[RMDB]
RNA sequence: GGGAACGACUCGAGUAGAGUCGAAAAGAUAUGGAUAGAGCUGCUGUUGAGGUCGCUCGGAAACGAGCGACUACCCACCAACAGAACUACAGUGGAUCCUAAGUCAAAAGGCGUCUUCGGACGCCAACCCUGACGUAUAGUUCGCUAUACGUCAGGGAAAAGAAACAACAACAACAAC
Reactivity to DMS in 0.01 (KOAc 150mM, MgCl2 10mM, bicine 150mM(pH8.5), 24C), signal-to-noise 2, nucleotides 027 to 126: g000a110u030a170u000g010g010a040u000a090g000a150g050c010u010g000c010u000g000u000u000g010a120g000g010u000c010g020c000u000c000g010g000a030a090a110c030g040a000g010c000g010a000c020u000a050c030c000c040a300c110c010a000a010c020a010g000a060a020c060u030a220c020a020g000u000g000g010a090u030c000c000u000a090a050g010u000c060a070a010a190a130g000g000c000g000u000c000u040u000c180g000g000a000c000g020c000c000a010a040
Reactivity to 2A3 in 0.01 (KOAc 150mM, MgCl2 10mM, bicine 150mM(pH8.5), 24C), signal-to-noise 2, nucleotides 027 to 126: g050a030u180a050u160g000g010a010u030a070g220a130g220c030u040g000c000u010g010u020u000g050a030g000g000u030c000g030c000u010c000g010g010a020a030a000c000g000a020g000c050g000a010c010u010a000c010c010c020a040c000c010a010a000c000a000g000a100a030c130u300a120c150a030g020u090g090g130a010u020c010c030u070a170a000g080u080c100a000a040a100a100g030g020c010g000u020c020u090u120c230g160g000a010c000g000c030c000a000a000